[RMDB]
The record gives the reactivity of an RNA of 177 nucleotides to DMS. DMS adducts were read by reverse transcription with MarathonRT. Conditions: 150 mM KOAc, 10 mM MgCl2 and 150 mM bicine (pH 8.5), 24 C. DMS (dimethyl sulfate) methylates the pairing face of unpaired adenines and cytosines.

RNA sequence: GGGAACGACUCGAGUAGAGUCGAAAAUCUAUCAAAUUCGUUUGAUAGAAAACCCGCCGUAGGCACCAAGAUCGAGCUACGGUCAUCUAAGAGUGCAAAUAAACAGCCCCCCAUUCGUGGGGGGCAAUUCACCAUUUAAUUUCGAUUAAAUGGUGAAAAAAGAAACAACAACAACAAC
Reactivity to DMS in 0.01 (KOAc 150mM, MgCl2 10mM, bicine 150mM(pH8.5), 24C), signal-to-noise 1, nucleotides 027 to 126: u010c000u000a000u000c000a010a020a040u030u030c170g020u000u000u000g000a020u000a000g010a020a070a150a200c050c000c030g000c090c120g020u010a060g000g000c020a010c040c050a190a120g000a070u000c110g030a150g030c110u000a040c080g020g000u000c070a030u000c090u010a040a050g010a080g020u000g020c100a080a110a040u010a070a060a070c180a130g030c000c000c000c020c000c000a040u000u000c120g000u000g000g000g010g020g020g000c000a000a000